[RMDB]
The record gives the reactivity of an RNA of 177 nucleotides to 2A3 and DMS. The RNA was probed in 150 mM KOAc, 10 mM MgCl2 and 150 mM bicine (pH 8.5) at 24 C. DMS adducts were read by reverse transcription with MarathonRT. The data come from the RNA Mapping Database (RMDB), library M2PK90. High DMS reactivity at an A or C suggests that its Watson-Crick edge is free. The DMS profile rests on 7,190 reads. For 2A3, 8,190 sequencing reads were counted.
RNA sequence: GGGAACGACUCGAGUAGAGUCGAAAACAACAGGGAGGUUGGUGGUGGACGAGCCACUCGCCAACCGGGUCAGGUCCGGAAGGAAGCACCCCUAACGAGCCAGGCACGGGUCGCCGUGCCAGUACAAACCGUUACACUAAUUCGUUAGUGUAACGGUAAAAGAAACAACAACAACAAC
Reactivity to 2A3 in 0.01 (KOAc 150mM, MgCl2 10mM, bicine 150mM(pH8.5), 24C), signal-to-noise 2, nucleotides 027 to 126: c000a000a010c010a030g040g050g030a080g000g030u020u030g000g010u010g000g020u020g020g050a060c040g010a050g210c000c010a020c020u090c030g000c010c000a000a000c000c000g000g000g000u010c020a030g000g160u000c010c010g010g060a040a030g030g020a050a030g030c030a070c010c000c000c000u040a080a050c060g050a020g070c010c090a070g010g000c000a000c000g000g000g090u150c060g000c130c000g000u000g000c010c010a000g000u030a010c050a030a170
Reactivity to DMS in 0.01 (KOAc 150mM, MgCl2 10mM, bicine 150mM(pH8.5), 24C), signal-to-noise 6, nucleotides 027 to 126: c060a080a090c130a090g010g010g000a110g010g010u010u010g010g020u000g000g020u000g000g010a210c300g010a120g010c000c000a010c020u000c030g010c000c000a020a050c000c010g000g010g000u000c060a080g020g000u000c010c020g020g020a110a130g000g000a040a080g010c100a090c070c020c010c020u010a050a130c060g000a190g000c050c030a120g000g010c020a010c000g000g000g020u010c300g020c000c000g010u010g000c000c000a030g020u000a060c160a090a120